[RMDB]
RNA sequence: GGGAACGACUCGAGUAGAGUCGAAAAGAAAGAAACAGCUUUGGACAAAAGUCUAUAGCCAGUGCAUUUGAAAACUCCCCGUGCACUAGGGCUGACUGUAGCUGGGGGAAGACAGUUUACUCAUUUGCUCUCUCCUUUCAUACAGUCAGCUGGUCCCUCUCCUCAGGUGUAGACCACCUAUUAUCAUUUUACCUGUUUUGAUUCUCUGAUGAGCAAAGUCCCAAGACUUAUCAGCUGGGAUAGGCCUCAUUUACAAGACAGCUCUAACUCCCACAUUCGUGUGGGAGAAAAGAAACAACAACAACAAC
Reactivity to 2A3 in 0.01 (KOAc 150mM, MgCl2 10mM, bicine 150mM(pH8.5), 24C), signal-to-noise 1, nucleotides 027 to 266: g030a000a130a040g020a010a280a000c000a000g010c060u140u140u180g000g010a000c080a020a300a160a180g000u000c000u000a010u040a050g000c000c000a020g000u030g010c020a050u070u070u300g270a300a300a110a170c060u080c000c020c000c000g010u000g020c000a000c010u040a100g020g010g000c020u010g020a000c000u000g010u010a000g010c020u030g000g000g050g000g000a110a000g000a000c040a080g000u060u180u190a230c230u180c100a120u100u150u180g020c010u000c000u000c000u000c030c000u000u020u000c030a070u040a030c010a040g000u000c000a000g000c000u000g000g020u010c010c000c000u020c020u040c020c060u160c070a000g000g000u000g010u040a030g090a160c010c050a020c130c000u030a150u150u110a080u200c020a060u040u180u160u090a080c040c030u000g060u000u060u020u000g140a130u270u030c150u020c080u230g080a050u000g000a020g000c020a000a000a210g010u010c000c020c000a120a000g000a110c020u090u050a250u300c130a030g020c040u020g030g000g000a000u000a040g150g000c020c030u050c010a010u060u080u030a030c000a000a010g050a000c020a030g010c010u000c040u030a050a000
Reactivity to DMS in 0.01 (KOAc 150mM, MgCl2 10mM, bicine 150mM(pH8.5), 24C), signal-to-noise 1, nucleotides 027 to 266: g000a150a070a280g000a210a170a140c030a150g010c040u000u000u000g000g000a000c000a240a210a190a240g000u020c100u000a090u010a000g000c000c120a040g010u000g000c040a040u000u000u070g000a180a100a140a230c200u000c010c000c010c090g020u020g000c010a000c000u000a130g040g000g010c000u000g040a000c040u000g000u000a010g020c080u000g000g000g000g000g000a020a020g020a120c060a100g010u040u040u060a130c280u070c220a000u000u000u040g020c080u000c050u000c000u000c010c000u000u000u030c000a150u010a000c070a000g000u000c010a000g010c000u000g000g000u020c040c080c080u030c030u000c080c030u000c150a000g010g040u000g000u090a180g000a120c300c030a000c030c000u000a080u030u040a050u020c070a010u010u040u010u020a130c300c020u000g000u010u010u010u010g000a170u000u000c100u030c210u000g000a020u010g010a020g000c020a030a020a220g000u000c020c020c000a040a110g020a150c040u000u020a030u000c140a140g000c070u000g020g000g000a020u000a020g000g000c120c010u000c000a000u000u000u000a080c100a020a010g000a020c050a000g000c190u000c000u020a070a300
The record gives the reactivity of an RNA of 307 nucleotides to 2A3 and DMS.
For 2A3, 1,013 sequencing reads were counted.
For DMS the reverse transcriptase was MarathonRT.
Conditions: 150 mM KOAc, 10 mM MgCl2 and 150 mM bicine (pH 8.5), 24 C.